RNA sequence: GGGAACGACUCGAGUAGAGUCGAAAAGCAAAACGUGGUAAGACUAAGAACCGACUCGACGUAGCCCACUCUGGCGUGGCUAAAUCCACAUCUUCUGAUAUUGUCGGGGCUAAUUUUAUCACAGUUGUGGAUCCCUUAAUUUCGAUUAAGGGAUCCAAAAAGAAACAACAACAACAAC
Reactivity to DMS in 0.01 (KOAc 150mM, MgCl2 10mM, bicine 150mM(pH8.5), 24C), signal-to-noise 2, nucleotides 027 to 126: g000c080a110a020a080a070c050g000u010g000g000u000a000a010g010a000c040u000a100a090g000a030a010c010c000g010a010c010u010c200g020a040c300g000u000a080g020c030c010c020a050c040u010c140u010g000g020c070g040u000g020g020c060u000a050a090a070u000c000c160a060c160a070u000c000u000u000c160u010g010a050u000a040u010u000g010u000c010g000g000g010g020c000u020a060a060u000u000u000u000a000u020c000a000c000a210g030u000u010g010
The record gives the reactivity of an RNA of 177 nucleotides to DMS. DMS adducts were read by reverse transcription with MarathonRT.